[RMDB]
This 207-nucleotide RNA was probed chemically with DMS and 2A3. Values are in units of 0.01, from 0 to 300, in steps of 10. The 2A3 profile rests on 5,572 reads. For DMS the reverse transcriptase was MarathonRT.
RNA sequence: GGGAACGACUCGAGUAGAGUCGAAAAACACCAAAACUGAAAACGGAAGGCAAUCCUUCCACGACGAUACUUACUUUCCUUUGAUCGUCGCUACUACUGGCAUAGCCACAAAGGAGAACAAACAUGAGCGCGGACACUGACUUCGGUCAGUGUCCAACACAGUACUAUUCUUCGGAAUAGUACUGUGAAAAGAAACAACAACAACAAC
Reactivity to DMS in 0.01 (KOAc 150mM, MgCl2 10mM, bicine 150mM(pH8.5), 24C), signal-to-noise 2, nucleotides 027 to 156: a080c080a200c060c050a090a050a100a300c130u020g000a090a020a130a120c150g000g000a040a020g060g060c170a140a210u000c000c000u000u000c010c010a020c000g040a040c020g010a050u000a080c060u000u000a060c090u000u000u010c070c010u000u000u000g000a060u000c010g020u000c040g040c070u010a060c040u000a210c120u000g030g040c060a070u010a150g000c000c020a070c060a030a090a020g020g010a000g000a050a090c100a110a060a080c080a080u000g010a120g040c060g020c060g000g030a060c000a020c000u000g010a020c000u000u000c250g000g050u000c010a020g010u000g000u000c000c000a030a020
Reactivity to 2A3 in 0.01 (KOAc 150mM, MgCl2 10mM, bicine 150mM(pH8.5), 24C), signal-to-noise 7, nucleotides 027 to 156: a010c090a120c020c040a060a040a040a070c150u210g090a100a080a040a060c080g010g000a010a000g010g050c150a030a220u260c000c000u000u000c000c010a000c000g010a000c000g020a010u080a150c030u090u040a030c020u050u130u090c010c000u030u010u040g020a020u030c010g010u060c010g010c010u060a060c040u020a020c010u070g020g030c070a220u100a150g040c030c010a050c050a020a040a000g050g020a040g020a060a030c050a070a110a020c050a120u210g080a070g140c150g010c090g040g000a000c000a000c000u000g010a000c000u030u050c190g020g000u000c000a000g000u000g000u000c000c000a000a000
For DMS, 2,255 sequencing reads were counted. The reactions ran in a buffer of 150 mM KOAc, 10 mM MgCl2 and 150 mM bicine (pH 8.5), at 24 C. 2A3 adducts were read by reverse transcription with SuperScript II with manganese.